[RMDB]
RNA sequence: GGGAACGACUCGAGUAGAGUCGAAAAGUGCCGCAAUCCACCCGUAGCGGGAUUGAGUUCAGCGCGGGCAGGCCCAACACGCUGUGUUGCACAUAGUCGUCGUAGCUGUCGAACGCCCCGGGUGUGCAACACUGGGGUAUUUCGAUACCCCAGUGUUAAAAGAAACAACAACAACAAC
Reactivity to 2A3 in 0.01 (KOAc 150mM, MgCl2 10mM, bicine 150mM(pH8.5), 24C), signal-to-noise 6, nucleotides 027 to 126: g030u030g080c010c010g020c070a020a070u050c020c010a010c020c020c020g020u040a020g030c040g020g030g020a010u050u250g070a070g110u080u100c020a000g010c010g000c020g010g030g020c040a080g060g030c000c010c000a010a010c020a000c030g300c180u210g010u000g000u040u050g070c080a030c000a090u180a030g040u050c040g010u010c010g010u040a100g010c010u020g020u060c020g020a070a020c030g050c000c020c000c020g000g040g000u020g030u050g010c030
Reactivity to DMS in 0.01 (KOAc 150mM, MgCl2 10mM, bicine 150mM(pH8.5), 24C), signal-to-noise 9, nucleotides 027 to 126: g020u000g020c020c020g010c100a110a100u010c080c020a100c020c020c020g020u010a140g020c030g010g000g000a110u000u010g010a170g000u000u000c030a050g020c030g000c030g000g000g010c040a070g010g010c060c160c020a060a050c040a030c030g020c160u010g010u000g010u000u000g010c180a110c060a100u000a060g010u010c020g010u010c040g020u000a100g020c030u000g010u000c040g000a130a150c090g000c020c020c110c030g000g010g010u010g010u000g010c110

Structure probing data (2A3 and DMS) for a 177-nucleotide construct.
DMS adducts were read by reverse transcription with MarathonRT.
2A3 adducts were read by reverse transcription with SuperScript II with manganese.
The 2A3 profile rests on 10,969 reads.